[RMDB]
RNA sequence: GGGAACGACUCGAGUAGAGUCGAAAAGAUAUGGAAUUCCAUAUGUAGAGUGAUGACCUCGGAAACGAGCAAGCUUGAAAUGGAGAUUCCUAAGUCAAACUUCUCGAACGUUCGCGUUCGAGAAGAACAUAGAUGAACAGUUCGCUGUUCAUCUAUGAAAAGAAACAACAACAACAAC
Reactivity to DMS in 0.01 (KOAc 150mM, MgCl2 10mM, bicine 150mM(pH8.5), 24C), signal-to-noise 9, nucleotides 027 to 126: g010a050u000a300u000g000g000a030a010u000u000c000c000a010u000a050u010g000u000a150g010a010g010u000g010a130u010g010a110c300c010u000c010g010g010a110a100a150c010g010a010g010c040a070a240g010c000u000u000g000a090a060a010u000g000g000a050g010a040u000u000c000c000u000a050a130g010u000c030a070a090a200c000u000u000c000u000c000g000a010a000c000g020u000u020c240g030c010g010u000u000c000g000a010g010a000a000g000a070a120
Reactivity to 2A3 in 0.01 (KOAc 150mM, MgCl2 10mM, bicine 150mM(pH8.5), 24C), signal-to-noise 8, nucleotides 027 to 126: g010a020u070a040u130g000g020a010a020u030u000c010c010a010u050a080u150g070u080a030g010a020g060u040g100a300u170g070a130c030c010u000c010g000g000a070a060a030c000g000a000g000c020a110a040g010c010u060u080g050a040a030a010u020g020g010a160g050a120u010u020c000c000u010a090a010g060u030c060a080a070a160c010u000u000c000u000c000g000a000a010c010g020u110u120c300g000c010g140u000u010c000g010a000g000a000a000g000a000a000
The record gives the reactivity of an RNA of 177 nucleotides to DMS and 2A3. In probing experiments dimethyl sulfate is read out at A N1 and C N3, which are open when not base-paired. DMS adducts were read by reverse transcription with MarathonRT. For DMS, 13,834 sequencing reads were counted. The RNA was probed in 150 mM KOAc, 10 mM MgCl2 and 150 mM bicine (pH 8.5) at 24 C.